[RMDB]
RNA sequence: GGGAACGACUCGAGUAGAGUCGAAAAUGCUAAUCAGGAUAUAUUUUCUCUAAAAUAUCCCAGCCAUGGGAGUCUGACCACCUCUAUCAGGCAUAACUUGCUCUAAGUCCAUCAUAAAUGCUAGAGGACAGUAGAGGACAUUCGUGUCCUCUACUGUAAAAGAAACAACAACAACAAC
Reactivity to DMS in 0.01 (KOAc 150mM, MgCl2 10mM, bicine 150mM(pH8.5), 24C), signal-to-noise 2, nucleotides 027 to 126: u000g010c050u000a110a150u020c120a130g030g010a060u000a020u000a090u000u010u000u000c070u010c070u030a050a090a080a080u010a050u000c000c010c090a060g020c060c100a110u010g000g020g000a070g000u010c040u010g010a190c080c010a100c100c010u000c020u000a140u000c040a040g000g000c050a090u000a060a030c100u000u010g000c080u010c070u010a020a050g000u010c020c030a070u010c100a100u010a060a030a140u020g030c170u000a020g010a030g000g000
Reactivity to 2A3 in 0.01 (KOAc 150mM, MgCl2 10mM, bicine 150mM(pH8.5), 24C), signal-to-noise 1, nucleotides 027 to 126: u100g020c020u080a160a000u160c040a030g020g060a000u030a000u020a080u090u130u040u030c080u020c020u080a000a210a130a130u020a070u010c050c000c000a060g050c040c000a040u040g050g000g030a050g060u000c010u010g020a000c020c020a020c000c030u000c000u070a080u080c020a040g080g000c000a010u090a030a030c040u010u120g060c020u060c020u090a000a140g020u010c010c010a060u070c020a060u110a300a180a010u180g040c030u030a010g000a000g050g020
This 177-nucleotide RNA was probed chemically with DMS and 2A3. The RNA was probed in 150 mM KOAc, 10 mM MgCl2 and 150 mM bicine (pH 8.5) at 24 C.